Chemical mapping of a 207-nucleotide RNA with 2A3. Source: RMDB library ARCHII, as collected in RNAgym. The 2A3 profile rests on 433 reads. The reactions ran in a buffer of 150 mM KOAc, 10 mM MgCl2 and 150 mM bicine (pH 8.5), at 24 C.
[RMDB]
RNA sequence: GGGAACGACUCGAGUAGAGUCGAAAAGUGUAUGGCCAGGGCAACGACCUCGGGUAUGGUAAUAACGUCAAAAUAAAAUUGGUUGGUGAAAACGUGGUGUGUGUCGUCGUUCUUGUACUCGAGGACCCCACACUCCUUUUCGAAAGGGCGGGUCUCGCGGUAAAGAAGUCUUCGGACUUCUUUACCGAAAAGAAACAACAACAACAAC
Reactivity to 2A3 in 0.01 (KOAc 150mM, MgCl2 10mM, bicine 150mM(pH8.5), 24C), signal-to-noise 1, nucleotides 027 to 156: g090u050g000u050a050u150g040g020c030c020a030g120g020g000c060a150a060c080g050a070c020c010u090c100g060g050g000u150a100u090g010g050u060a030a100u050a190a020c020g030u080c120a010a020a120a120u270a030a100a090a030u140u150g080g000u000u050g040g000u020g010a000a000a040a040c080g050u040g000g000u020g000u000g000u020g030u080c020g020u000c020g040u030u080c020u000u050g060u030a040c010u020c010g040a040g100g000a090c000c010c020c020a050c010a000c020u110c030c000u100u100u080u150c040g080a150a000a060g050g020g000c080g000g000g010u030c050u040c020g010